The data come from the RNA Mapping Database (RMDB), library OK2TRN. This 177-nucleotide RNA was probed chemically with 2A3 and DMS. The DMS profile rests on 3,082 reads. The RNA was probed in 150 mM KOAc, 10 mM MgCl2 and 150 mM bicine (pH 8.5) at 24 C. The 2A3 profile rests on 1,963 reads.

RNA sequence: GGGAACGACUCGAGUAGAGUCGAAAAGAGGCAGUUGGCCGGGCAUGGUGGCUCACCCUGUAAUCCCAGCCCUUUGCAAGGCCGAGGCGGGGCCUAUCACGAGGUCAGGAGAUUGAAACCAUCCUGGGUGCACUAGAAGAUUCGUCUUCUAGUGCACAAAAGAAACAACAACAACAAC
Reactivity to 2A3 in 0.01 (KOAc 150mM, MgCl2 10mM, bicine 150mM(pH8.5), 24C), signal-to-noise 2, nucleotides 027 to 126: g080a020g040g030c040a040g020u120u180g070g000c030c030g010g010g020c080a050u050g000g030u050g070g030c040u040c000a100c010c000c000u050g050u120a060a090u050c010c000c000a010g030c010c010c000u130u090u090g050c040a060a060g000g000c010c040g010a070g000g050c060g000g020g000g020c000c000u150a150u110c040a060c140g060a010g060g040u050c020a010g020g030a040g020a040u010u130g040a080a020a010c030c040a070u040c010c010u040g100g000
Reactivity to DMS in 0.01 (KOAc 150mM, MgCl2 10mM, bicine 150mM(pH8.5), 24C), signal-to-noise 3, nucleotides 027 to 126: g030a100g000g020c030a110g020u010u000g010g010c020c000g010g000g020c120a060u000g010g020u000g030g010c060u010c060a130c060c020c020u010g010u000a070a130u000c010c020c000a130g010c030c020c040u000u000u000g030c110a090a080g020g000c010c020g000a090g020g000c010g000g000g000g000c070c040u010a080u010c070a080c150g000a050g000g020u010c040a030g010g010a070g010a080u000u000g000a070a110a070c110c100a050u010c000c030u010g010g000